[RMDB]
RNA sequence: GGGAACGACUCGAGUAGAGUCGAAAAUGUCGGUCACCACACUUCUUCCAACAGCAACCGGCUGAGGGAGGUCGCAACGAACAGAGGGGUCAACGCGCACCUCGUCAACUGCGCAGAUGACGUGAAGCAUUAUCCGUCACUUCGGUGACGGAUAAUGAAAAGAAACAACAACAACAAC
Reactivity to 2A3 in 0.01 (KOAc 150mM, MgCl2 10mM, bicine 150mM(pH8.5), 24C), signal-to-noise 3, nucleotides 027 to 126: u120g040u030c010g020g010u040c060a020c050c020a050c020a010c030u090u040c010u100u010c040c010a080a060c000a110g050c010a110a160c080c080g210g000c010u030g000a040g010g020g020a010g020g040u050c030g000c040a040a050c070g050a040a000c030a040g050a060g010g020g000g000u030c060a090a090c060g060c010g010c020a020c010c010u040c000g030u020c000a040a050c040u050g000c040g000c010a020g030a170u100g030a020c030g040u070g080a030a000g030
Reactivity to DMS in 0.01 (KOAc 150mM, MgCl2 10mM, bicine 150mM(pH8.5), 24C), signal-to-noise 4, nucleotides 027 to 126: u000g020u000c050g010g010u000c030a040c040c030a100c130a110c060u010u000c030u000u010c020c010a080a110c090a080g000c040a100a120c140c120g010g000c030u000g000a140g030g030g010a050g000g020u010c050g010c040a060a090c100g030a050a050c080a050g000a070g010g020g010g020u000c040a060a080c200g010c050g020c050a060c020c010u000c020g010u000c110a040a140c130u000g000c030g000c080a070g000a040u010g000a050c070g000u000g000a110a140g000

This 177-nucleotide RNA was probed chemically with 2A3 and DMS. For DMS, 3,128 sequencing reads were counted. DMS adducts were read by reverse transcription with MarathonRT. Conditions: 150 mM KOAc, 10 mM MgCl2 and 150 mM bicine (pH 8.5), 24 C. 2A3 is a SHAPE reagent: it acylates the 2'-hydroxyl of flexible nucleotides of all four kinds.